[RMDB]
RNA sequence: GGGAACGACUCGAGUAGAGUCGAAAAGAUAUGGAGCGCACGGGAGCGAAGAACUGUAUCGGAAACGAUACAGGGAGCUUUGUGACGCUCCUAAGUCAAAACGCAUAUGAGUUCGCUCAUAUGCGAAGUUCAUGCUACUGUUCGCAGUAGCAUGAACAAAAGAAACAACAACAACAAC
Reactivity to DMS in 0.01 (KOAc 150mM, MgCl2 10mM, bicine 150mM(pH8.5), 24C), signal-to-noise 1, nucleotides 027 to 126: g000a010u000a110u000g000g000a000g030c020g040c000a010c060g000g050g000a040g000c000g000a110a140g000a140a250c000u000g020u000a000u000c010g000g000a040a030a030c000g020a020u000a000c000a000g010g000g010a030g030c010u010u010u010g020u010g000a220c000g020c000u010c000c000u000a010a050g040u000c000a110a060a090a180c020g020c000a000u000a020u010g000a040g020u000u020c300g000c000u040c000a010u000a000u000g030c000g000a020a050
Reactivity to 2A3 in 0.01 (KOAc 150mM, MgCl2 10mM, bicine 150mM(pH8.5), 24C), signal-to-noise 2, nucleotides 027 to 126: g000a000u000a000u060g000g000a000g020c020g040c000a000c040g100g280g160a140g010c040g240a300a020g000a030a000c010u040g010u000a000u000c010g000g000a010a010a010c000g000a000u010a000c010a000g020g000g000a020g030c040u130u140u300g010u000g180a180c040g000c010u020c000c000u000a000a000g000u000c030a020a010a060a130c030g000c010a010u000a000u020g020a000g080u120u190c300g030c140u020c010a000u000a010u010g010c010g010a010a030

Structure probing data (DMS and 2A3) for a 177-nucleotide construct. Reactivities are rounded to 0.1 and cut off at 0 and 3. Values cover nucleotides 27 to 126. The RNA was probed in 150 mM KOAc, 10 mM MgCl2 and 150 mM bicine (pH 8.5) at 24 C. DMS adducts were read by reverse transcription with MarathonRT.